[RMDB]
This 207-nucleotide RNA was probed chemically with DMS and 2A3. For DMS, 2,743 sequencing reads were counted. The 2A3 profile rests on 1,826 reads. Values cover nucleotides 27 to 156. High DMS reactivity at an A or C suggests that its Watson-Crick edge is free. High 2A3 reactivity points to a flexible backbone, as in loops and unpaired stretches.
RNA sequence: GGGAACGACUCGAGUAGAGUCGAAAAACAGCGAAAGGCACAAGACUUCGAACAUUAUAGCAGUUAGUAGUUGCCUAAACCCAUUGCAAUAUAUGGGACAGUAGGGGUCGCAAGCCUAUACUGUGCGAAAAGUCGCAAGGUUUCGACCUUGCGACAAUGCAUAACUAACCUUCGGGUUAGUUAUGCAAAAAGAAACAACAACAACAAC
Reactivity to DMS in 0.01 (KOAc 150mM, MgCl2 10mM, bicine 150mM(pH8.5), 24C), signal-to-noise 2, nucleotides 027 to 156: a000c050a060g020c030g000a120a070a090g000g010c030a080c110a150a200g000a050c010u000u000c010g010a160a100c050a120u000u000a130u030a110g050c030a030g050u010u010a130g070u000a090g020u010u010g000c000c030u000a030a070a220c010c010c000a030u000u000g000c070a160a130u010a020u000a020u000g000g000g010a050c000a010g020u000a060g010g020g030g000u010c080g010c190a080a170g030c000c000u010a130u000a020c020u000g000u000g010c000g000a060a060a060a070g010u000c000g000c010a010a010g010g000u000u010u000c290g010a050c000c000u000u010g040c000g010a020c020a010a030
Reactivity to 2A3 in 0.01 (KOAc 150mM, MgCl2 10mM, bicine 150mM(pH8.5), 24C), signal-to-noise 3, nucleotides 027 to 156: a030c020a000g030c010g070a200a070a040g010g050c020a030c000a010a080g050a030c010u020u030c080g060a160a070c070a180u200u190a140u240a090g090c070a000g020u010u060a030g060u060a030g000u120u080g010c010c000u040a100a030a050c000c000c000a000u010u020g000c010a010a000u010a000u000a000u200g000g030g000a000c000a000g040u040a000g000g030g030g000u070c020g010c190a010a010g010c000c000u000a000u000a010c000u000g000u040g000c010g050a060a040a070a130g000u000c010g000c010a020a000g020g020u000u030u190c130g070a050c000c000u000u010g000c000g000a000c000a000a000